[RMDB]
RNA sequence: GGGAACGACUCGAGUAGAGUCGAAAACUUGGCGAUAGGCGUGCAAGGAGCGCUUCUACAGCCUCUCGCUGCUCCUCGGUUAGCUUGCCACCUUCGCCUCUCACCUGGAGUAUCGCUUCUAUAGCGCCUCACCUCGGGGCUUCGGCCCCGAGGUGAGAAAAGAAACAACAACAACAAC
Reactivity to 2A3 in 0.01 (KOAc 150mM, MgCl2 10mM, bicine 150mM(pH8.5), 24C), signal-to-noise 2, nucleotides 027 to 126: c010u050u060g000g010c050g010a050u060a090g000g000c150g030u240g000c000a030a000g100g000a060g030c080g020c060u080u030c020u130a120c020a000g000c000c000u150c040u060c050g050c050u180g010c010u000c000c020u040c040g040g140u060u040a050g050c030u000u050g000c000c000a000c000c030u040u000c090g040c000c000u000c000u000c020a130c000c010u040g050g020a070g030u120a100u300c040g040c040u060u020c080u290a120u150a080g020c000g030c000